Overview
The record gives the reactivity of an RNA of 207 nucleotides to 2A3 and DMS. Reactivities are given for positions 27 through 156. The DMS profile rests on 1,363 reads. High DMS reactivity at an A or C suggests that its Watson-Crick edge is free. Conditions: 150 mM KOAc, 10 mM MgCl2 and 150 mM bicine (pH 8.5), 24 C. For 2A3 the reverse transcriptase was SuperScript II with manganese. Source: RMDB library OK3TST, as collected in RNAgym. For DMS the reverse transcriptase was MarathonRT. For 2A3, 554 sequencing reads were counted.

[RMDB]
RNA sequence: GGGAACGACUCGAGUAGAGUCGAAAAAUGCUGCACCCAAUAGGUAUCUCCUUGAUGAGAAGAACCUUGUAUACCCACUGAUUGGAAAGGAAGUAUCUGUUUAUGUUAAGUCUGACAAAGUACAUAUUGAAAUAUCUGAGAAGAAAGAAAGGCUAUCCUCAAAGCUAGUUUUCGAACUAGCUUUGAGAAAAGAAACAACAACAACAAC
Reactivity to 2A3 in 0.01 (KOAc 150mM, MgCl2 10mM, bicine 150mM(pH8.5), 24C), signal-to-noise 1, nucleotides 027 to 156: a010u100g000c040u020g000c040a070c020c010c000a040a090u120a090g000g020u020a110u060c000u020c030c050u150u230g070a230u170g010a140g000a030a070g010a000a040c000c000u000u000g010u030a050u070a080c000c040c000a100c120u040g080a120u120u070g000g000a020a060a100g010g040a020a070g010u020a060u050c010u050g030u030u090u050a040u060g010u020u080a120a030g030u060c030u050g010a010c030a070a030a000g010u020a000c000a050u120a040u050u090g060a010a020a020u100a030u000c150u010g060a080g020a180a050g060a080a010a030g080a000a020a100g070g000c040u090a070u160c020
Reactivity to DMS in 0.01 (KOAc 150mM, MgCl2 10mM, bicine 150mM(pH8.5), 24C), signal-to-noise 1, nucleotides 027 to 156: a070u000g000c050u000g010c030a100c020c050c030a090a100u010a000g050g020u000a090u000c000u000c000c000u000u000g050a300u030g000a120g010a030a170g010a100a050c020c040u020u000g050u000a180u010a130c030c000c050a170c130u000g000a100u000u020g010g000a170a060a050g000g020a030a070g020u000a020u000c100u020g030u000u000u010a070u030g010u000u000a040a080g000u020c050u000g030a060c050a050a110a050g030u000a020c000a100u000a070u000u000g000a100a050a200u000a070u000c050u000g010a180g010a110a050g000a030a140a040g000a060a050a080g060g030c050u020a100u010c080